[RMDB]
The record gives the reactivity of an RNA of 177 nucleotides to DMS and 2A3.
2A3 adducts were read by reverse transcription with SuperScript II with manganese.
In probing experiments dimethyl sulfate is read out at A N1 and C N3, which are open when not base-paired.
It was measured as part of the RMDB library TTRDEL.
The reactions ran in a buffer of 150 mM KOAc, 10 mM MgCl2 and 150 mM bicine (pH 8.5), at 24 C.

RNA sequence: GGGAACGACUCGAGUAGAGUCGAAAAGAUAUGGACGGUGUGGAGAGCUUGGAUUUAUCGGAAACGAUUGUCAGCUCCCACCCGUCCUAAGUCAAAAGUUGACCAUCACUUCGGUGAUGGUCAACAAGCUACAGGAUUUCUUCGGAAAUCCUGUAGCAAAAGAAACAACAACAACAAC
Reactivity to DMS in 0.01 (KOAc 150mM, MgCl2 10mM, bicine 150mM(pH8.5), 24C), signal-to-noise 1, nucleotides 027 to 126: g030a020u000a300u000g000g000a000c000g000g000u020g020u010g000g000a170g000a030g000c000u000u010g000g000a010u000u000u000a010u000c000g010g000a070a020a170c010g020a020u000u000g000u000c000a020g000c000u010c000c000c010a000c000c000c000g000u000c010c000u000a000a030g000u000c010a140a070a110a110g010u000u000g000a010c010c010a040u000c010a000c010u000u030c250g040g050u000g000a000u000g000g000u010c000a000a000c020a040a030
Reactivity to 2A3 in 0.01 (KOAc 150mM, MgCl2 10mM, bicine 150mM(pH8.5), 24C), signal-to-noise 1, nucleotides 027 to 126: g010a000u080a020u100g010g010a010c010g000g040u170g020u020g270g020a270g010a020g300c130u230u300g150g000a090u230u300u140a010u110c000g030g020a050a040a050c010g000a000u010u020g040u000c000a000g020c010u010c000c000c000a000c010c000c000g000u000c000c000u000a010a000g020u000c000a000a050a000a170g030u000u010g000a010c010c000a000u000c000a020c000u100u060c270g130g010u010g000a000u000g000g000u000c000a010a000c000a010a010